Background:
Chemical mapping of a 177-nucleotide RNA with DMS. The RNA was probed in 150 mM KOAc, 10 mM MgCl2 and 150 mM bicine (pH 8.5) at 24 C. Reactivities are rounded to 0.1 and cut off at 0 and 3. For DMS, 705 sequencing reads were counted. Reactivities are given for positions 27 through 126.
[RMDB]
RNA sequence: GGGAACGACUCGAGUAGAGUCGAAAAUAAUGUAUUAUGGAGAUAGGGGCUGAUAAUAUCGUUAAGCAGCGUCGAUUUACCCGACCCCGAUACGCCCGUUAUCACCGAGAGUGUACCCAACGGAAAGUAAAGACGGUUCAUUCGUGAACCGUCUUUAAAAAGAAACAACAACAACAAC
Reactivity to DMS in 0.01 (KOAc 150mM, MgCl2 10mM, bicine 150mM(pH8.5), 24C), signal-to-noise 1, nucleotides 027 to 126: u040a070a030u010g010u010a070u000u000a120u000g000g040a120g000a040u010a020g020g100g010g010c010u030g010a080u030a060a090u000a020u010c010g000u050u000a040a180g000c160a080g010c160g030u000c010g010a110u010u000u010a090c140c040c000g000a080c010c010c090c020g030a060u000a060c150g000c000c010c000g030u030u000a030u000c000a070c030c040g000a090g020a110g010u000g000u000a060c000c010c050a100a110c190g000g000a060a110a150g010